[RMDB]
RNA sequence: GGGAACGACUCGAGUAGAGUCGAAAAUGUGUGUGAUGGGGGCGCAGUGGUGAGGCCUGGUGCCCAGAGGCCAGGGGAGGAUGCACUGGGCCACAGGAGGACCCCAGAGGCCAGGGUAGGUUCCUCCCUACGCAAAGCAGUUCGCUGCUUUGCGUAGAAAAGAAACAACAACAACAAC
Reactivity to DMS in 0.01 (KOAc 150mM, MgCl2 10mM, bicine 150mM(pH8.5), 24C), signal-to-noise 2, nucleotides 027 to 126: u020g030u020g000u000g030u000g010a070u020g000g000g000g000g000c120g020c070a120g040u010g010g010u010g000a120g000g020c000c020u000g010g020u020g050c040c050c010a100g000a100g000g040c040c050a130g010g010g000g000a030g000g000a060u040g000c040a040c020u020g010g000g000c030c070a050c100a080g000g010a090g000g010a180c080c020c000c020a090g000a060g030g010c030c030a140g000g000g010u020a110g030g000u010u000c010c000u020c060c030
Reactivity to 2A3 in 0.01 (KOAc 150mM, MgCl2 10mM, bicine 150mM(pH8.5), 24C), signal-to-noise 2, nucleotides 027 to 126: u140g030u000g010u000g050u050g020a110u090g020g000g000g020g000c030g000c050a020g050u090g020g050u060g030a080g050g030c000c000u010g000g040u060g020c000c020c010a030g040a050g010g030c050c060a060g030g030g020g000a070g030g000a030u140g020c020a010c010u010g010g000g000c020c010a040c010a030g010g020a010g000g040a050c000c000c000c000a010g030a030g040g010c000c010a040g000g000g010u100a060g000g020u090u040c000c000u000c000c000
About this RNA: Structure probing data (DMS and 2A3) for a 177-nucleotide construct.